[RMDB]
Background:
Conditions: 150 mM KOAc, 10 mM MgCl2 and 150 mM bicine (pH 8.5), 24 C. Chemical mapping of a 177-nucleotide RNA with 2A3 and DMS. 2A3 adducts were read by reverse transcription with SuperScript II with manganese. The 2A3 profile rests on 1,891 reads. Source: RMDB library OK1LIB, as collected in RNAgym. For DMS, 3,296 sequencing reads were counted.
RNA sequence: GGGAACGACUCGAGUAGAGUCGAAAAAAGCUUUUCUACUAUAUAUUGCAUGGCCAGUUACCAAAUGAUUUGGAGCCAGAUGACUUGGGCCCACUAGCAAAUCAGAAUUGGAAGGCAAUUCGAGCUGUCAAGCACAAAGGUUCGCCUUUGUGCUUGAAAAAGAAACAACAACAACAAC
Reactivity to 2A3 in 0.01 (KOAc 150mM, MgCl2 10mM, bicine 150mM(pH8.5), 24C), signal-to-noise 4, nucleotides 027 to 126: a000a010g090c080u080u080u030u010c060u080a120c050u010a070u040a060u040a100u260u130g020c030a080u040g080g000c000c020a020g000u040u050a140c050c020a040a060a090u250g100a170u040u040u090g010g000a020g040c060c050a060g050a130u100g010a080c050u070u100g040g020g010c010c000c010a060c080u020a030g050c000a050a020a100u110c050a030g100a100a080u070u020g000g030a050a040g080g030c000a020a010u080u030c040g030a030g040c040u040g040
Reactivity to DMS in 0.01 (KOAc 150mM, MgCl2 10mM, bicine 150mM(pH8.5), 24C), signal-to-noise 2, nucleotides 027 to 126: a060a090g000c010u020u000u020u030c010u000a040c090u040a110u030a100u010a040u010u000g000c020a070u000g010g020c000c030a070g000u000u000a070c080c040a060a030a160u060g000a100u010u000u000g010g010a110g010c020c020a050g000a040u010g010a150c170u020u020g020g000g020c000c010c090a110c140u000a080g000c040a010a040a060u040c060a070g010a060a020u000u000g000g000a090a080g000g000c000a040a040u000u000c050g000a040g000c050u010g000